[RMDB]
RNA sequence: GGGAACGACUCGAGUAGAGUCGAAAACAGUGCCCCCAGUUGCAUAGCUCUGGGAGAUGACAUCCACCUUGAAUCUCCACAAUGGAACCUCUAGGGCUAUGACUUAGCGUCCAUUGUGAUGUUACCACCUGCAGUUGCACAAGGGGCCCUGGAUGAAAAAUUAGUAUGAUUUCGAUCAUACUAAUUUAAAAGAAACAACAACAACAAC
Reactivity to 2A3 in 0.01 (KOAc 150mM, MgCl2 10mM, bicine 150mM(pH8.5), 24C), signal-to-noise 4, nucleotides 027 to 156: c010a010g010u010g020c000c000c000c000c000a030g020u130u030g010c040a050u060a130g010c000u020c040u030g020g000g010a080g010a060u040g020a020c010a070u060c060c040a100c030c060u080u110g100a100a070u050c030u010c060c000a000c000a010a010u010g000g050a070a150c010c060u070c020u030a040g000g060g000c050u170a200u220g040a030c000u010u010a000g000c010g040u010c010c010a000u010u000g000u030g010a030u030g040u100u070a040c010c030a030c040c000u040g010c040a060g010u150u040g000c020a010c020a070a090g000g000g010g010c000c040c000u040g020g030a050u150g060a150a220
Reactivity to DMS in 0.01 (KOAc 150mM, MgCl2 10mM, bicine 150mM(pH8.5), 24C), signal-to-noise 4, nucleotides 027 to 156: c020a080g020u000g000c010c000c010c000c030a200g020u000u010g020c020a070u010a190g010c020u000c010u000g020g030g030a060g030a050u010g020a120c060a100u000c070c060a110c080c060u020u010g010a140a110u000c030u000c100c000a050c090a060a030u010g000g000a070a070c060c050u010c010u000a040g030g000g010c030u000a070u010g010a070c030u000u000a030g030c300g010u000c000c000a070u000u000g030u000g000a090u000g000u000u010a070c020c000a070c060c000u020g000c070a080g020u000u000g020c020a050c030a160a090g010g020g040g020c000c030c030u000g010g010a070u000g000a040a060

Conditions: 150 mM KOAc, 10 mM MgCl2 and 150 mM bicine (pH 8.5), 24 C. The record gives the reactivity of an RNA of 207 nucleotides to 2A3 and DMS. The DMS profile rests on 9,696 reads. For 2A3, 3,135 sequencing reads were counted.